RNA sequence: GGGAACGACUCGAGUAGAGUCGAAAAAUUGGCAUUAUUUUGAUGCACAGCCCUUGACCAGGAAGGUACAACAGCUUUUCUAUACAGAGGACAUGGCCUCAAGAUUUGCUGAUGGGCUCUGCUUAUUAUAUCGCGUAGUUCGCUACGCGAAAAAGAAACAACAACAACAAC
Reactivity to DMS in 0.01 (KOAc 150mM, MgCl2 10mM, bicine 150mM(pH8.5), 24C), signal-to-noise 6, nucleotides 027 to 129: a080u040u010g010g040c000a060u000u000a000u070u050u050u020g000a040u000g020c000a080c010a070g020c030c010c020u040u040g020a100c150c060a070g020g030a070a080g040g010u000a010c080a130a120c080a080g020c010u010u010u000u000c010u040a080u030a100c280a110g020a000g000g000a060c120a100u000g050g060c030c040u020c040a090a050g020a000u010u000u000g030c000u020g000a090u020g000g020g030c040u040c010u000g040c000u000u000a060u050u040a070u030a040
Reactivity to 2A3 in 0.01 (KOAc 150mM, MgCl2 10mM, bicine 150mM(pH8.5), 24C), signal-to-noise 9, nucleotides 027 to 129: a020u050u050g040g010c020a010u020u060a070u050u170u050u140g050a030u040g000c010a000c000a090g030c010c000c000u030u100g040a020c000c010a020g110g080a120a060g080g000u070a150c060a100a010c010a070g000c000u020u050u010u000c010u020a100u030a170c080a060g030a020g010g010a020c060a180u130g120g040c010c000u000c010a000a000g000a020u020u020u020g000c010u020g010a070u070g030g000g000c010u010c020u000g010c010u030u030a080u180u080a100u120a040

Source: RMDB library 15KLIB, as collected in RNAgym. This 170-nucleotide RNA was probed chemically with DMS and 2A3. The reactions ran in a buffer of 150 mM KOAc, 10 mM MgCl2 and 150 mM bicine (pH 8.5), at 24 C. For 2A3, 27,273 sequencing reads were counted.